[RMDB]
RNA sequence: GGGAACGACUCGAGUAGAGUCGAAAAUAGGUGAGCGGCCGUAUCAGCCUCGCCACCAAGACGGGCAUACCUAACCCAUACGUAACCGCGAGCACCCGAUAACUACGCAGGAGAAUUCGAUGACCUCGAGUAGUACCGUAUUCGUACGGUACUACUCAAAAGAAACAACAACAACAAC
Reactivity to 2A3 in 0.01 (KOAc 150mM, MgCl2 10mM, bicine 150mM(pH8.5), 24C), signal-to-noise 7, nucleotides 027 to 126: u160a020g040g000u030g030a070g020c030g030g000c020c020g050u060a150u130c060a010g020c010c010u070c040g020c010c000a030c000c030a040a030g090a030c060g000g000g010c010a070u130a140c010c000u040a070a120c020c010c000a010u060a060c050g040u030a020a070c010c000g010c020g020a030g030c030a020c000c010c000g030a020u050a140a040c030u120a040c050g010c070a020g010g080a050g070a070a120u090u080c040g030a070u120g060a050c000c010u050c060
Reactivity to DMS in 0.01 (KOAc 150mM, MgCl2 10mM, bicine 150mM(pH8.5), 24C), signal-to-noise 3, nucleotides 027 to 126: u020a090g000g030u000g010a110g010c060g000g000c030c020g010u000a090u020c130a130g010c040c000u010c070g040c030c020a060c070c080a090a110g010a120c050g000g010g050c080a150u020a080c040c010u030a040a140c030c040c030a100u000a080c070g000u030a160a080c090c080g000c060g000a080g000c040a050c000c000c000g000a040u020a070a050c050u030a080c040g000c050a050g010g000a160g010a050a130u030u060c050g030a060u020g000a080c080c020u010c080